Source information
Structure probing data (2A3 and DMS) for a 177-nucleotide construct. For DMS, 2,241 sequencing reads were counted. Values cover nucleotides 27 to 126. It was measured as part of the RMDB library OK1LIB. The 2A3 profile rests on 2,892 reads. Conditions: 150 mM KOAc, 10 mM MgCl2 and 150 mM bicine (pH 8.5), 24 C.

RNA sequence: GGGAACGACUCGAGUAGAGUCGAAAAGGAGAUCGAAGAGGACCGACGUCAGCACGGUCAGGAUGUAGGUCCGCAUGCAUCCCAGUUGACGAAACUUAACGAUUUCCAAAGCGGACAAGAAGUCAAAAGCGUAUUAAUCCUUCGGGAUUAAUACGCUAAAAGAAACAACAACAACAAC
Reactivity to 2A3 in 0.01 (KOAc 150mM, MgCl2 10mM, bicine 150mM(pH8.5), 24C), signal-to-noise 3, nucleotides 027 to 126: g010g000a000g000a000u010c000g020a120a030g040a020g020g080a010c030c000g060a060c020g050u060c030a040g020c070a020c130g110g080u060c090a000g030g000a000u000g000u000a000g010g000u000c000c000g000c000a000u000g020c000a000u010c000c000c020a040g020u050u030g010a010c050g050a120a170a060c030u030u020a020a000c000g010a000u000u000u000c000c000a040a070a000g030c000g010g020a000c000a010a110g060a140a010g100u160c170a000a100a000
Reactivity to DMS in 0.01 (KOAc 150mM, MgCl2 10mM, bicine 150mM(pH8.5), 24C), signal-to-noise 2, nucleotides 027 to 126: g000g020a030g000a030u000c020g000a040a300g000a010g000g040a100c240c190g010a070c000g000u000c010a030g000c000a110c190g010g000u000c270a080g040g010a000u010g010u000a190g000g000u030c040c000g000c000a010u010g020c000a020u000c000c000c120a000g020u000u000g000a000c030g010a120a100a070c000u000u020a040a300c060g000a020u000u000u000c030c000a000a070a080g000c040g000g000a020c020a090a130g000a110a040g000u010c080a020a100a150